[RMDB]
RNA sequence: GGGAACGACUCGAGUAGAGUCGAAAAUAGUUGCGUAACAACUGUUAGUUUAAUUUUCCAAAAUUUAUUUUUCACAAUUUUUAGUUAAGAUUUUAGCUUGCCUUAAGCAGUCUUUAUAUCUUCUGUAGUCUAUAAGUACAUUCGUGUACUUAUAGACAAAAGAAACAACAACAACAAC
Reactivity to DMS in 0.01 (KOAc 150mM, MgCl2 10mM, bicine 150mM(pH8.5), 24C), signal-to-noise 2, nucleotides 027 to 126: u010a010g020u000u010g010c080g000u070a120a210c000a030a020c010u000g000u000u020a140g000u020u010u030a080a130u010u000u000u000c010c010a050a070a100a100u030u040u010a020u010u010u030u030u020c060a100c010a030a020u030u000u010u030u010a100g000u010u010a030a040g000a060u000u020u050u000a060g010c010u030u010g000c100c140u010u020a030a140g010c010a070g000u000c000u020u000u000a040u020a060u020c070u000u000c010u000g000u000a270
Reactivity to 2A3 in 0.01 (KOAc 150mM, MgCl2 10mM, bicine 150mM(pH8.5), 24C), signal-to-noise 5, nucleotides 027 to 126: u050a010g020u020u020g050c020g060u140a100a040c010a010a010c000u010g010u060u040a120g070u020u050u190a110a080u050u040u030u030c020c000a060a160a060a060u140u230u100a160u090u120u090u270u250c040a040c040a080a120u150u190u110u190u160a120g020u040u080a040a010g010a020u060u060u030u220a020g000c010u020u080g070c020c100u110u120a040a020g000c000a000g000u030c000u000u080u060a180u030a040u060c050u070u000c000u040g110u070a000
Description: Conditions: 150 mM KOAc, 10 mM MgCl2 and 150 mM bicine (pH 8.5), 24 C. Chemical mapping of a 177-nucleotide RNA with DMS and 2A3. High DMS reactivity at an A or C suggests that its Watson-Crick edge is free. For DMS the reverse transcriptase was MarathonRT. Reactivities are given for positions 27 through 126.